[RMDB]
RNA sequence: GGGAACGACUCGAGUAGAGUCGAAAAACGUAGAUGCUAGUCUCUAAGAUUAAGCCAUGCAUGUUUCCGCAAUCAGGGACGAAUAGCUCAGUAAAACUGCGAUGAUUUAGUCUGGCUGUGUAGAUAAUUUAGUUACAUACUUCGGUAUGUAACUAAAAAAAGAAACAACAACAACAAC
Reactivity to 2A3 in 0.01 (KOAc 150mM, MgCl2 10mM, bicine 150mM(pH8.5), 24C), signal-to-noise 9, nucleotides 027 to 126: a000c080g030u080a030g010a110u080g020c020u010a020g000u010c010u000c050u110a150a070g010a080u120u060a090a020g010c050c030a030u100g020c020a030u080g070u030u030u000c020c000g010c020a010a040u080c020a030g030g000g040a020c010g010a050a060u050a050g010c010u010c060a010g030u100a020a130a070a070c020u020g020c030g100a120u120g020a030u100u040u060a070g020u020c020u020g030g000c010u000g010u010g040u070a040g040a160u110a110a080
Reactivity to DMS in 0.01 (KOAc 150mM, MgCl2 10mM, bicine 150mM(pH8.5), 24C), signal-to-noise 9, nucleotides 027 to 126: a080c090g020u020a060g010a070u010g000c020u000a070g010u000c010u010c110u020a090a100g010a060u010u010a060a070g010c030c090a060u000g000c060a060u010g020u000u000u000c020c020g010c090a060a050u010c060a060g000g000g010a050c040g000a070a060u020a080g000c030u010c030a040g010u010a070a050a070a290c040u000g010c070g000a070u020g000a060u010u010u010a060g000u000c040u000g000g000c020u000g000u010g000u010a060g010a090u010a060a100

The record gives the reactivity of an RNA of 177 nucleotides to 2A3 and DMS. It was measured as part of the RMDB libraries RFM100 and RFMREP. For 2A3 the reverse transcriptase was SuperScript II with manganese.